[RMDB]
RNA sequence: GGGAACGACUCGAGUAGAGUCGAAAACUGGACACUUUCACGCGACUUGAGGAGGAAAUUAACUGGUCACCUCAGACCUCAGCAGAUAUUUACACACAGUUGGAGAUGAACUGGAAGGAAUUCUCCCCCAUGGGGAGCGAUUCGUCGCUCCCCAUGGAAAAGAAACAACAACAACAAC
Reactivity to 2A3 in 0.01 (KOAc 150mM, MgCl2 10mM, bicine 150mM(pH8.5), 24C), signal-to-noise 2, nucleotides 027 to 126: c060u030g030g090a020c030a040c090u040u040u140c070a030c060g090c050g070a060c040u080u140g040a020g010g000a010g000g060a030a040a090u110u030a170a040c070u060g020g020u020c000a030c030c000u000c000a040g040a050c000c020u040c010a050g000c010a000g080a020u050a110u160u160u140a100c090a020c010a000c000a050g040u030u010g040g000a080g020a060u040g000a090a030c040u040g020g030a050a000g040g000a020a020u040u020c010u000c010c000c010
Reactivity to DMS in 0.01 (KOAc 150mM, MgCl2 10mM, bicine 150mM(pH8.5), 24C), signal-to-noise 2, nucleotides 027 to 126: c060u000g020g020a130c140a050c030u000u000u000c080a090c100g010c120g000a070c050u000u000g010a020g010g020a180g020g000a070a010a060u030u000a030a210c160u010g000g040u000c030a080c050c050u010c060a150g010a050c040c030u010c070a050g000c030a020g010a080u020a040u000u000u020a060c180a070c090a160c110a030g010u000u010g010g010a210g000a020u010g020a110a090c010u000g020g020a100a110g000g020a050a070u010u010c100u000c010c060c110
Description: Chemical mapping of a 177-nucleotide RNA with 2A3 and DMS. It was measured as part of the RMDB library OK2TST. The RNA was probed in 150 mM KOAc, 10 mM MgCl2 and 150 mM bicine (pH 8.5) at 24 C.